[RMDB]
RNA sequence: GGGAACGACUCGAGUAGAGUCGAAAAGGUGCUUGUUCGCAAGCACCAAAAAAACCUUUGUGUUCGAAGAACUAGUUUUGUGCCUUGCCCAUUGGGCAAGGAACUACACGGACUAGGGAGAACACUCUGGUAAAAAACGACCACUUCGGUGGUCGAAGAUCAACUUAUACUUCGGUAUAAGUUGAUCAAAAGAAACAACAACAACAAC
Reactivity to 2A3 in 0.01 (KOAc 150mM, MgCl2 10mM, bicine 150mM(pH8.5), 24C), signal-to-noise 3, nucleotides 027 to 156: g000g010u010g010c020u060u000g030u070u130c210g030c140a000a010g020c000a000c010c000a000a020a000a000a000a000a010c000c000u020u020u030g000u000g000u000u000c040g090a270a040g010a140a050c020u010a000g030u010u000u050u300g010u000g000c000c000u000u010g000c010c050c130a300u170u300g000g010g000c000a000a010g000g000a000a010c010u050a000c010a000c000g010g010a000c000u010a010g020g020g010a060g000a000a000c000a000c000u000c010u020g020g000u050a130a120a010a030a010a010c010g000a000c010c010a000c000u060u070c260g130g000u000g000g000u000c000g010a030a010
Reactivity to DMS in 0.01 (KOAc 150mM, MgCl2 10mM, bicine 150mM(pH8.5), 24C), signal-to-noise 2, nucleotides 027 to 156: g040g010u000g020c010u000u000g010u000u000c300g050c010a010a030g010c000a000c010c000a000a000a040a090a050a040a010c000c010u000u000u000g030u000g020u000u000c010g000a110a180g030a180a200c020u000a000g020u000u000u000u010g050u000g010c010c020u000u000g000c000c000c010a300u030u010g040g020g000c030a020a000g000g000a000a020c070u000a300c010a020c060g010g010a020c000u010a000g020g000g000a280g020a040a010c000a040c000u000c040u000g010g030u000a000a050a060a070a110a070c020g020a030c000c000a000c000u000u010c300g050g030u000g000g010u010c000g000a010a080
An RNA of 207 nucleotides, treated with 2A3 and DMS and read out base by base. For DMS the reverse transcriptase was MarathonRT. Values are in units of 0.01, from 0 to 300, in steps of 10. It was measured as part of the RMDB library RNAMAK. The 2A3 profile rests on 3,041 reads.